[RMDB]
RNA sequence: GGGAACGACUCGAGUAGAGUCGAAAAGCGCCGUAUAACGCGUGUCAGUAUGUGCUGUAGCGUCGUGGUAUACCAUGUAAUUGUGGUUGGUUACACGCGCGCAACGUUGAUACUGCGUAUGGUGCCAUGCAGUUGCAACUAUGCGACACGUGUGUCGCAACCCGCGACUAUUCGUAGUCGCGGGUUGAAAAGAAACAACAACAACAAC
Reactivity to 2A3 in 0.01 (KOAc 150mM, MgCl2 10mM, bicine 150mM(pH8.5), 24C), signal-to-noise 4, nucleotides 027 to 156: g030c010g010c030c020g110u150a120u050a170a010c010g010c000g000u010g000u020c000a000g010u110a130u210g120u090g060c060u110g040u200a130g020c020g020u220c040g000u090g070g020u120a050u040a100c000c000a040u010g100u290a120a210u190u300g040u020g030g020u050u050g010g060u080u160a030c000a000c010g040c010g000c010g000c010a040a000c030g010u000u000g010a020u020a030c010u160g000c000g010u020a070u020g030g000u020g000c040c010a010u140g000c010a020g010u070u090g020c040a060a040c060u060a030u230g030c010g020a010c000a010c060g130u090g050u080g020u110c010g000
Reactivity to DMS in 0.01 (KOAc 150mM, MgCl2 10mM, bicine 150mM(pH8.5), 24C), signal-to-noise 3, nucleotides 027 to 156: g000c000g040c010c000g020u000a100u010a080a070c060g040c010g030u000g030u020c020a110g040u020a080u000g030u000g050c000u000g040u000a150g040c050g040u010c030g070u000g000g010u000a300u000a040c000c110a050u000g010u000a080a170u010u000g020u000g020g010u000u010g030g030u000u010a060c000a010c020g000c040g010c010g000c000a040a020c050g030u000u000g010a070u000a020c000u000g020c000g020u010a080u000g000g000u000g030c000c060a110u010g020c050a160g030u000u000g010c030a030a250c050u000a080u010g010c000g010a040c000a050c070g010u010g050u010g020u000c020g010
Description:
This 207-nucleotide RNA was probed chemically with 2A3 and DMS. The data come from the RNA Mapping Database (RMDB), library OK3TST. The reactions ran in a buffer of 150 mM KOAc, 10 mM MgCl2 and 150 mM bicine (pH 8.5), at 24 C. For DMS the reverse transcriptase was MarathonRT. Values are in units of 0.01, from 0 to 300, in steps of 10. The DMS profile rests on 7,900 reads. The 2A3 profile rests on 2,117 reads.